[RMDB]
RNA sequence: GGGAACGACUCGAGUAGAGUCGAAAAUUGCUUUUGUUAGGUCUCCAAGUCGAUCCCUCAAGUCAGCAGUCAGAAUUGCAACAGUUUACUCAUGGGCCUACGGGGAUGAUGAGAAAUCAUGGGGUGACAAUCCGUACGAUUUCGAUCGUACGGAUUGAAAAGAAACAACAACAACAAC
Reactivity to DMS in 0.01 (KOAc 150mM, MgCl2 10mM, bicine 150mM(pH8.5), 24C), signal-to-noise 3, nucleotides 027 to 126: u010u010g010c090u000u000u000u000g020u010u010a110g010g010u000c020u000c080c040a080a110g010u010c030g010a070u000c010c000c010u010c120a110a100g030u000c050a060g010c040a010g000u000c090a080g010a080a090u000u000g000c050a110a100c100a040g000u000u000u010a090c050u000c040a080u000g010g000g010c030c030u000a060c080g010g020g020g020a080u000g000a030u000g000a090g000a070a090a060u010c010a030u000g010g000g010g020u000g020a100
Reactivity to 2A3 in 0.01 (KOAc 150mM, MgCl2 10mM, bicine 150mM(pH8.5), 24C), signal-to-noise 2, nucleotides 027 to 126: u090u070g070c010u070u090u000u090g090u060u160a060g040g070u000c000u000c040c010a030a030g040u030c010g070a050u010c010c000c000u020c060a040a040g070u040c010a020g000c010a000g040u060c010a020g070a190a160u090u050g030c030a080a040c000a070g020u040u100u080a090c040u020c030a050u060g010g060g000c010c010u020a090c070g010g010g030g010a040u060g000a000u030g040a040g000a030a090a000u040c010a030u060g000g000g010g020u010g000a010